RNA sequence: GGGAACGACUCGAGUAGAGUCGAAAAGUUCAGUAUCGCACGGUUGCCCCAGUGAGAGAAGGCUCCGGUGGAUUGCUCUAUUGGUUUGGGCUGUGUAAUGGUUGCGCGCUGAGGGUAUAACCAUUGGCUAAAUAUAAAUAUUCGUAUUUAUAUUUAGAAAAGAAACAACAACAACAAC
Reactivity to DMS in 0.01 (KOAc 150mM, MgCl2 10mM, bicine 150mM(pH8.5), 24C), signal-to-noise 2, nucleotides 027 to 126: g030u010u000c020a030g000u010a030u010c040g020c080a090c070g000g020u000u030g000c100c060c000c050a170g010u010g020a160g010a200g000a200a210g000g000c040u020c030c060g010g040u010g000g010a040u030u030g010c060u000c020u020a070u040u020g010g020u000u040u010g000g000g000c000u000g000u000g000u000a050a050u010g000g000u000u010g010c050g010c060g000c050u020g000a070g000g000g010u000a060u020a090a090c010c010a070u020u010g000g020
Reactivity to 2A3 in 0.01 (KOAc 150mM, MgCl2 10mM, bicine 150mM(pH8.5), 24C), signal-to-noise 2, nucleotides 027 to 126: g030u140u110c030a000g010u010a170u160c020g080c070a070c010g080g060u120u240g030c000c010c010c040a070g030u140g070a240g000a020g060a150a080g080g000c000u020c020c000g000g000u000g000g050a040u000u100g000c000u000c010u010a080u020u170g040g020u060u120u010g020g000g000c010u010g010u000g000u050a040a040u080g010g050u070u060g000c010g000c010g050c010u000g000a050g050g060g000u070a080u160a080a040c000c000a040u030u100g020g000
Record summary
Structure probing data (DMS and 2A3) for a 177-nucleotide construct. It was measured as part of the RMDB library OK1LIB. The reactions ran in a buffer of 150 mM KOAc, 10 mM MgCl2 and 150 mM bicine (pH 8.5), at 24 C. Values cover nucleotides 27 to 126. For DMS, 3,682 sequencing reads were counted.